This 177-nucleotide RNA was probed chemically with DMS and 2A3. The DMS profile rests on 704 reads. DMS adducts were read by reverse transcription with MarathonRT. For 2A3 the reverse transcriptase was SuperScript II with manganese. The data come from the RNA Mapping Database (RMDB), library OK1LIB.
[RMDB]
RNA sequence: GGGAACGACUCGAGUAGAGUCGAAAAGAAAAGUUGGAGCACGCCAACCGUGCGAAAAGAAAAGAUCGGCUACACGAUCGUAGCGAAAACAAAACAUGGCGUACCCAUGAGUACGGAAAGAAAGAAAGGGUAAGAUUGUCUUCGGACAAUCUUACCCAAAAGAAACAACAACAACAAC
Reactivity to DMS in 0.01 (KOAc 150mM, MgCl2 10mM, bicine 150mM(pH8.5), 24C), signal-to-noise 1, nucleotides 027 to 126: g000a090a100a100a070g050u000u000g000g090a220g000c210a190c030g000c000c000a110a190c130c190g120u000g000c000g030a160a000a210a110g000a060a110a130a250g000a050u000c110g000g000c030u120a050c060a270c100g020a060u000c080g020u000a000g000c000g000a050a080a260a140c220a030a040a050a100c000a050u040g000g000c120g000u000a180c000c000c000a020u000g040a110g000u000a000c050g060g040a110a060a000g020a000a020a300g000a050a030a020
Reactivity to 2A3 in 0.01 (KOAc 150mM, MgCl2 10mM, bicine 150mM(pH8.5), 24C), signal-to-noise 1, nucleotides 027 to 126: g130a000a000a000a000g000u000u000g020g000a070g060c060a030c130g000c210c000a110a080c030c000g010u030g000c000g080a000a120a000a080g100a080a210a000a080g000a000u000c000g140g000c000u150a100c120a000c120g200a290u270c100g050u000a000g000c000g080a010a050a050a050c100a000a000a080a000c060a030u000g000g000c000g050u050a130c010c000c000a080u160g130a070g040u000a000c000g030g050a190a050a120g030a000a070a000g160a080a160a020